[RMDB]
RNA sequence: GGGAACGACUCGAGUAGAGUCGAAAAUACGGUUUCCGUCUGGGCUUCUUGCAUUCUGGGACAGCCAAGUCUGUGACUUGCACGGUCAGUUGCCCUGAGGGGCUGGCUUCCAUGAGACUUCAAUGCCCUAAUGACGCCAAUUCGUUGGCGUCAUUAGAAAAGAAACAACAACAACAAC
Reactivity to 2A3 in 0.01 (KOAc 150mM, MgCl2 10mM, bicine 150mM(pH8.5), 24C), signal-to-noise 7, nucleotides 027 to 126: u150a030c050g030g000u020u070u090c030c020g060u020c060u060g020g010g000c010u020u020c010u060u110g020c020a050u080u050c020u090g030g000g020a020c050a020g030c040c010a080a030g040u010c060u060g150u050g070a130c020u050u090g000c070a020c100g030g000u030c010a050g020u080u090g050c000c000c000u020g060a130g010g000g010g000c020u020g010g000c000u040u000c000c000a050u130g070a020g020a070c010u020u020c080a040a100u110g050c020c010
Reactivity to DMS in 0.01 (KOAc 150mM, MgCl2 10mM, bicine 150mM(pH8.5), 24C), signal-to-noise 5, nucleotides 027 to 126: u050a050c080g020g000u010u010u020c020c040g020u030c060u010g000g010g000c010u000u000c040u010u000g020c130a070u030u020c070u020g000g010g020a040c100a100g000c100c000a050a100g010u010c020u030g020u030g010a090c070u000u010g000c080a080c130g000g000u000c030a080g000u010u000g020c010c020c020u010g010a160g010g020g010g010c020u010g000g000c020u000u000c010c010a110u020g000a100g010a090c090u010u010c070a060a100u020g010c020c030
Structure probing data (2A3 and DMS) for a 177-nucleotide construct.
The data come from the RNA Mapping Database (RMDB), library OK1LIB.